[RMDB]
RNA sequence: GGGAACGACUCGAGUAGAGUCGAAAACGGCAAAAAAGCAAACUUGACCACCAAGGAUAAAAGAGAUCUUAUCCAAGGAAGCAAAAGAUAAUCUCACUUUUGACACCCACUGAUCUCGAACUUAAAGAAAACCGAGACUACUUCGGUAGUCUCGGAACUCAACGAACUGGUUCGCCAGUUCGUUGAGAAAAGAAACAACAACAACAAC
Reactivity to 2A3 in 0.01 (KOAc 150mM, MgCl2 10mM, bicine 150mM(pH8.5), 24C), signal-to-noise 2, nucleotides 027 to 156: c040g000g000c050a010a000a030a040a040a070g140c090a180a160a070c060u080u070g040a150c000c020a000c010c010a060a030g000g000a010u010a040a070a010a000g010a000g000a010u010c000u000u020a000u000c020c000a030a020g010g010a040a000g070c010a000a020a020a000g010a040u150a220a160u110c050u040c110a050c020u040u020u030u030g070a040c020a090c030c060c010a070c090u070g010a010u000c010u000c010g000a050a020c030u130u190a130a020a030g080a040a120a020a000c000c000g000a000g000a000c000u010a000c000u000u050c090g050g000u000a000g000u000c000u000c000g000g000a000a000

Description: This 207-nucleotide RNA was probed chemically with 2A3. Values are in units of 0.01, from 0 to 300, in steps of 10. 2A3 adducts were read by reverse transcription with SuperScript II with manganese. It was measured as part of the RMDB library M2RFPK. The reactions ran in a buffer of 150 mM KOAc, 10 mM MgCl2 and 150 mM bicine (pH 8.5), at 24 C.